Chemical mapping of a 177-nucleotide RNA with 2A3 and DMS. Values cover nucleotides 27 to 126. The reactions ran in a buffer of 150 mM KOAc, 10 mM MgCl2 and 150 mM bicine (pH 8.5), at 24 C. 2A3 adducts were read by reverse transcription with SuperScript II with manganese.

RNA sequence: GGGAACGACUCGAGUAGAGUCGAAAAGGCGAGAAGCAGGCCAUUAUCGCCGGCAUGGCGGCCGACGCGCUGGGCUGGCGUUCGCGACGCGAGGCUGGAUGGCCUUCCCCAUUAUGAUUCUUCUCGCGCACAGCAUGGAAUUCGUUCCAUGCUGUGCAAAAGAAACAACAACAACAAC
Reactivity to 2A3 in 0.01 (KOAc 150mM, MgCl2 10mM, bicine 150mM(pH8.5), 24C), signal-to-noise 3, nucleotides 027 to 126: g120g000c020g010a020g000a030a000g000c080a010g000g000c000c000a030u100u070a130u190c080g000c050c000g000g040c020a070u060g090g000c000g040g050c060c060g050a040c060g010c000g010c030u090g040g090g000c080u070g000g000c000g020u060u070c030g010c030g120a100c090g000c010g050a040g060g030c090u110g090g000a000u020g010g010c000c000u010u070c040c010c020c000a030u230u290a140u220g130a060u090u000c010u000u010c000u010c000g000c000
Reactivity to DMS in 0.01 (KOAc 150mM, MgCl2 10mM, bicine 150mM(pH8.5), 24C), signal-to-noise 3, nucleotides 027 to 126: g030g010c000g000a000g000a030a010g020c300a080g000g000c000c010a010u000u000a080u000c030g040c000c000g010g020c030a040u010g010g030c010g020g020c060c060g010a040c150g010c030g020c070u000g010g020g020c060u000g010g020c020g010u000u000c040g020c060g000a120c140g000c010g010a060g020g010c040u020g000g000a030u000g000g000c010c000u000u000c010c010c010c100a080u040u000a100u000g010a150u010u000c010u000u000c000u000c010g020c060
It was measured as part of the RMDB library OK2TRN.